[RMDB]
Overview
An RNA of 177 nucleotides, treated with DMS and read out base by base.

RNA sequence: GGGAACGACUCGAGUAGAGUCGAAAAACACUGUUGCUUUUCACAUUUCAAACUCGAUGUAUUUGUCAGACAGAAAUGUAGGUACUAUAGAAUGAGACAGUUUUUUUCUGGUUGAACAUCAAGUGGAAAUCCCGUUGAGUUUCGACUCAACGGGAUUAAAAGAAACAACAACAACAAC
Reactivity to DMS in 0.01 (KOAc 150mM, MgCl2 10mM, bicine 150mM(pH8.5), 24C), signal-to-noise 1, nucleotides 027 to 126: a080c050a050c090u030g010u000u000g010c070u020u000u000u000c060a120c060a080u000u000u010c010a070a050a080c050u000c130g000a050u000g020u000a130u000u020u000g000u010c010a040g000a040c130a040g000a000a020a030u000g020u010a050g000g010u010a050c100u000a100u010a110g000a160a130u000g010a110g000a040c020a050g000u030u000u030u000u000u000u000c000u000g030g010u000u010g040a090a040c050a030u000c030a040a010g010u000g010g000a100